An RNA of 177 nucleotides, treated with 2A3 and read out base by base. For 2A3, 379 sequencing reads were counted. Source: RMDB library OK1LIB, as collected in RNAgym.
[RMDB]
RNA sequence: GGGAACGACUCGAGUAGAGUCGAAAAGGGCAAUGGAAGUUACAGGAACUGAUACAUUCCGACACCGUUCAAUCAAUGAUUUAAGUGGUGGUCAAAGACAACGUGUUUGGAUUGCAAUGGCAUUAGCAGGCAUGCCGACUUUCGAGUCGGCAUGCCUAAAAGAAACAACAACAACAAC
Reactivity to 2A3 in 0.01 (KOAc 150mM, MgCl2 10mM, bicine 150mM(pH8.5), 24C), signal-to-noise 1, nucleotides 027 to 126: g130g010g000c020a030a060u160g000g000a140a100g120u200u290a030c240a100g030g030a000a000c030u000g010a010u060a100c020a130u000u000c000c020g000a000c010a010c000c000g000u000u000c030a000a000u030c000a000a090u190g130a090u020u000u210a130a230g070u080g030g110u220g000g000u090c000a020a020a020g000a000c080a120a030c110g020u000g000u000u000u130g000g000a000u000u000g000c000a090a100u020g050g030c000a020u220u000a080g190c180